[RMDB]
RNA sequence: GGGAACGACUCGAGUAGAGUCGAAAACACUCGUGAUAGAAGCCCGCUUCGGUGAACCGGGCGGACGUGAGCUGGAUCUGUGGCUUCAUCGCGCCGCGGUCGACCUUGUUGCCGUGCAUGCCGACCAUCAUAGGAGAUCGUUCGCGAUCUCCUAUGAAAAAGAAACAACAACAACAAC
Reactivity to 2A3 in 0.01 (KOAc 150mM, MgCl2 10mM, bicine 150mM(pH8.5), 24C), signal-to-noise 5, nucleotides 027 to 126: c080a020c020u050c010g070u060g050a060u060a180g080a080a020g050c000c000c020g020c000u090u120c040g060g010u100g070a150a100c020c020g030g070g000c060g030g020a040c030g030u060g030a040g000c030u020g030g020a080u020c050u130g130u180g090g000c000u060u060c010a070u060c030g000c030g000c040c010g070c030g020g030u040c030g040a120c000c010u040u100g080u080u080g050c050c020g020u050g040c000a020u050g010c020c010g050a040c040c020a040
Reactivity to DMS in 0.01 (KOAc 150mM, MgCl2 10mM, bicine 150mM(pH8.5), 24C), signal-to-noise 4, nucleotides 027 to 126: c110a120c070u000c040g020u000g000a110u000a120g010a140a130g010c020c020c020g030c120u000u000c020g020g020u000g000a120a100c100c030g020g000g010c010g000g000a080c100g000u010g000a140g010c050u030g010g000a090u020c020u030g000u020g000g000c030u010u030c050a070u010c060g000c090g000c110c050g030c050g000g000u000c020g020a080c080c060u000u010g020u010u030g000c020c030g020u000g000c060a050u000g020c060c020g000a100c050c080a170
An RNA of 177 nucleotides, treated with 2A3 and DMS and read out base by base. The 2A3 profile rests on 3,734 reads. DMS adducts were read by reverse transcription with MarathonRT.